The record gives the reactivity of an RNA of 177 nucleotides to 2A3 and DMS. 2A3 adducts were read by reverse transcription with SuperScript II with manganese. The RNA was probed in 150 mM KOAc, 10 mM MgCl2 and 150 mM bicine (pH 8.5) at 24 C. For DMS the reverse transcriptase was MarathonRT.
RNA sequence: GGGAACGACUCGAGUAGAGUCGAAAAGCUAAAGACUUCGGUCUUUAGCAAAUAAAUUCAGGUGAUUUGCUACCUUUAAGUGCAGCUAGAAUUUCAAAAAUAAAACAACGAGGUUCGCCUCGUUGAAUCUAAUAGUGUUCUUCGGAACACUAUUAGAAAAAGAAACAACAACAACAAC
Reactivity to 2A3 in 0.01 (KOAc 150mM, MgCl2 10mM, bicine 150mM(pH8.5), 24C), signal-to-noise 4, nucleotides 027 to 126: g000c000u010a010a000a010g000a000c000u010u080c190g040g000u000c000u020u000u000a000g000c000a020a010a000u030a010a010a020u170u120c070a010g000g030u010g070a300u120u020u140g000c000u020a010c000c000u060u100u300a010a010g010u010g010c010a000g000c040u090a060g100a230a190u100u170u140c130a140a070a040a070a060u170a070a130a040a070c010a000a000c000g010a000g010g020u070u040c200g060c030c000u000c000g010u000u010g000a000a000
Reactivity to DMS in 0.01 (KOAc 150mM, MgCl2 10mM, bicine 150mM(pH8.5), 24C), signal-to-noise 3, nucleotides 027 to 126: g000c010u000a000a030a010g000a010c000u010u010c200g030g000u000c010u010u000u000a000g010c000a020a060a060u000a070a060a120u010u000c090a020g000g000u000g000a120u010u010u010g020c010u000a000c010c010u000u000u020a030a010g020u000g000c010a030g010c300u010a080g010a070a100u000u010u000c060a010a090a090a100a110u000a030a060a080a190c010a010a000c000g020a020g010g010u000u010c260g010c010c000u000c000g000u000u000g000a060a090